[RMDB]
RNA sequence: GGGAACGACUCGAGUAGAGUCGAAAAUCAGGCAUGAACUAAGCGGUCGCGUAGCGGCCACCUCCCCAUUUAUUGCAAUUGCUUCGCAAUUGUAAAAAAGGUUAACUAUCCACAUUUGAUACGACUAAUAUCCCAGCUGAUUCGUCAGCUGGGAUAUAAAAGAAACAACAACAACAAC
Reactivity to 2A3 in 0.01 (KOAc 150mM, MgCl2 10mM, bicine 150mM(pH8.5), 24C), signal-to-noise 1, nucleotides 027 to 126: u140c050a030g000g090c000a080u010g000a130a010c030u050a160a000g080c000g000g000u050c000g000c010g140u080a010g000c000g000g050c000c040a060c000c000u000c060c050c000c000a010u020u170u190a150u000u040g010c010a000a000u010u000g000c020u010u030c160g000c000a000a000u000u040g020u000a000a000a000a000a000a140g080g060u120u030a050a000c050u010a050u030c030c000a040c020a210u040u130u130g070a050u010a040c100g010a070c060u000a000
Reactivity to DMS in 0.01 (KOAc 150mM, MgCl2 10mM, bicine 150mM(pH8.5), 24C), signal-to-noise 1, nucleotides 027 to 126: u020c030a120g010g000c040a110u000g020a110a210c060u070a030a150g010c110g040g000u000c010g020c050g000u000a070g010c060g000g000c010c000a030c030c010u000c010c030c000c000a230u020u010u020a050u010u000g000c010a010a000u000u000g000c040u040u040c260g000c000a060a000u000u000g000u010a030a030a040a040a000a080g000g000u000u020a060a060c090u010a030u000c060c060a040c090a130u000u030u010g010a070u020a100c040g010a040c080u010a060